[RMDB]
RNA sequence: GGGAACGACUCGAGUAGAGUCGAAAACGUAGCCGCAAGCCGACAGGGCGCGACGAGGCGGCGGAAGGCCGCACGAGAAGUCGAAGCCUCUGGGCAAGAGGAGGCGAUCGAUCUGCACAAGACAGCGUAAUUACUCGCCAUUCGUGGCGAGUAAUUAAAAAGAAACAACAACAACAAC
Reactivity to DMS in 0.01 (KOAc 150mM, MgCl2 10mM, bicine 150mM(pH8.5), 24C), signal-to-noise 4, nucleotides 027 to 126: c030g000u010a100g010c020c000g000c050a160a270g010c010c000g000a150c100a070g020g000g000c030g000c000g010a040c000g000a210g000g000c000g000g060c000g000g030a160a140g000g000c000c020g050c000a060c170g030a160g000a120a080g010u010c010g000a110a190g010c010c000u000c000u000g000g020g030c050a100a130g010a120g010g020a050g010g000c020g010a070u000c030g010a030u010c020u000g010c030a070c160a060a070g000a050c100a160g020c130g000
Reactivity to 2A3 in 0.01 (KOAc 150mM, MgCl2 10mM, bicine 150mM(pH8.5), 24C), signal-to-noise 2, nucleotides 027 to 126: c020g030u070a050g050c010c000g070c040a060a000g030c010c010g080a100c050a060g030g010g000c050g020c050g000a010c050g020a060g070g010c000g000g000c010g040g150a170a060g280g000c000c010g120c040a080c050g050a070g050a300a010g030u030c010g030a120a020g030c020c000u060c030u060g000g020g000c020a010a010g060a030g020g060a020g030g010c020g000a010u080c000g000a010u000c010u080g020c060a080c010a200a010g060a110c020a010g070c040g080